[RMDB]
RNA sequence: GGGAACGACUCGAGUAGAGUCGAAAAGAUAUGGAGCUGCAUGGGAGAGCGUGUUCGGAAACGAACAUGGCUCGAAGAACAUGUCAGCUCCUAAGUCAAACGCAGUCAUAGUUCGCUAUGACUGCGAGUUUGGAGCAUAGUUCGCUAUGCUCCAAACAAAAGAAACAACAACAACAAC
Reactivity to 2A3 in 0.01 (KOAc 150mM, MgCl2 10mM, bicine 150mM(pH8.5), 24C), signal-to-noise 1, nucleotides 027 to 126: g000a000u020a000u070g010g000a000g000c010u020g000c020a020u010g020g010g070a300g020a000g040c010g010u010g000u000u000c000g000g030a030a010a010c000g010a010a000c020a010u050g300g020c010u010c010g020a080a040g020a010a000c010a000u000g160u250c040a000g010c010u000c000c000u000a000a010g000u000c000a000a000a060c030g000c010a000g000u010c000a000u010a020g020u080u110c300g010c210u000a010u000g000a010c000u000g000c000g000a010
Reactivity to DMS in 0.01 (KOAc 150mM, MgCl2 10mM, bicine 150mM(pH8.5), 24C), signal-to-noise 2, nucleotides 027 to 126: g020a010u000a020u010g000g000a020g010c000u000g020c000a010u000g000g020g010a050g020a010g020c000g010u000g000u000u000c000g010g000a010a000a020c000g000a010a020c000a010u000g010g060c000u000c000g000a070a140g000a150a300c000a000u000g000u020c010a010g020c000u000c000c000u000a010a050g010u000c000a140a130a300c020g020c000a000g000u000c000a010u000a010g010u000u020c290g000c020u010a000u000g000a010c000u010g010c000g000a010